RNA sequence: GGGAACGACUCGAGUAGAGUCGAAAAACAGGAGUAGCGAAGACUACCGCAAGGGGAAGAUCUUUUAUGAAAGCUUAAAGAACAGUUCGUUACCGUUCUCCUUAAAUGAUGCCUUUAACUACAUUAAAUCGGUCUAGUAAUUCGUUACUAGACCGAUAAAAGAAACAACAACAACAAC
Reactivity to DMS in 0.01 (KOAc 150mM, MgCl2 10mM, bicine 150mM(pH8.5), 24C), signal-to-noise 4, nucleotides 027 to 126: a100c070a090g010g010a060g010u000a020g020c040g000a070a070g000a120c050u000a130c040c010g010c270a090a050g020g010g000g010a090a070g000a070u010c010u010u000u000u000a120u010g000a110a130a160g000c100u000u010a050a060a070g000a050a070c110a070g010u010u010c070g020u010u010a050c060c030g000u000u000c010u000c020c100u010u010a030a100a090u000g010a040u010g020c030c030u010u000u000a050a060c070u000a040c100a050u000u000a020a080
Reactivity to 2A3 in 0.01 (KOAc 150mM, MgCl2 10mM, bicine 150mM(pH8.5), 24C), signal-to-noise 3, nucleotides 027 to 126: a000c080a060g040g050a060g050u090a000g020c010g030a050a020g050a100c030u050a060c050c020g000c070a040a020g100g000g000g020a020a020g010a050u000c010u020u050u050u090a110u100g130a100a060a010g020c020u060u050a050a090a000g050a050a010c010a050g030u030u080c010g030u030u020a030c040c000g010u010u000c020u030c010c000u050u060a060a070a060u160g050a060u110g040c010c000u050u100u050a080a060c040u150a030c050a080u200u270a020a050